An RNA of 177 nucleotides, treated with 2A3 and DMS and read out base by base. For 2A3 the reverse transcriptase was SuperScript II with manganese. For DMS the reverse transcriptase was MarathonRT. Values cover nucleotides 27 to 126. For 2A3, 14,592 sequencing reads were counted.
RNA sequence: GGGAACGACUCGAGUAGAGUCGAAAAGAUAUGGACUGGCAAGCGGGAGCUAAACUCGGAAACGAGUUACUAGCGAAGAACGCUCGCCAGUCCUAAGUCAAAAGGAGACGAGUUCGCUCGUCUCCAACUACUAUCCCUUGUUCGCAAGGGAUAGUAGAAAAGAAACAACAACAACAAC
Reactivity to 2A3 in 0.01 (KOAc 150mM, MgCl2 10mM, bicine 150mM(pH8.5), 24C), signal-to-noise 4, nucleotides 027 to 126: g010a010u020a010u050g000g000a000c000u010g000g000c020a020a000g020c030g080g300g240a010g000c020u000a040a030a010c000u000c010g020g010a010a010a010c010g010a010g000u020u020a180c100u010a000g000c030g000a170a050g300a270a030c010g010c000u010c010g000c000c000a000g000u010c000c000u010a000a000g000u000c000a000a000a040a090g000g000a000g000a000c010g000a000g010u070u190c290g140c200u000c000g000u010c000u010c000c000a010a000
Reactivity to DMS in 0.01 (KOAc 150mM, MgCl2 10mM, bicine 150mM(pH8.5), 24C), signal-to-noise 5, nucleotides 027 to 126: g000a020u000a150u010g000g000a020c000u010g000g010c010a020a010g020c000g020g000g010a180g000c000u000a020a030a000c000u010c000g010g010a030a020a080c010g010a010g000u000u000a100c300u000a010g010c000g000a110a200g040a140a130c000g000c010u000c050g000c000c010a010g010u000c010c010u000a000a060g010u010c020a110a060a120a150g010g000a020g000a020c000g010a020g000u000u010c300g010c000u000c000g010u000c000u010c000c010a020a020